[RMDB]
RNA sequence: GGGAACGACUCGAGUAGAGUCGAAAAGCUGGCAUUAGGAUUACUUGGUCUUGAGCUCCCGAUAGGUGAGCUCGGCUUGAGGGCCUAGUAGCCAGCGGCGUCAUAUUCCUGAUCCCUUUACCGAUUUCACCUAAUUGUCUUUCGAGACAAUUAGGUGAAAAGAAACAACAACAACAAC
Reactivity to 2A3 in 0.01 (KOAc 150mM, MgCl2 10mM, bicine 150mM(pH8.5), 24C), signal-to-noise 5, nucleotides 027 to 126: g000c000u000g020g000c000a010u010u020a000g040g070a100u140u110a300c010u010u020g000g030u040c030u080u300g000a000g000c000u000c000c020c000g150a300u220a210g000g040u180g060a000g000c000u000c000g000g000c000u040u230g020a020g000g010g000c000c000u010a000g000u020a050g010c000c000a000g000c000g010g010c000g040u050c030a050u030a080u160u040c030c020u020g060a080u040c050c020c000u080u120u090a100c050c050g090a110u010u010u000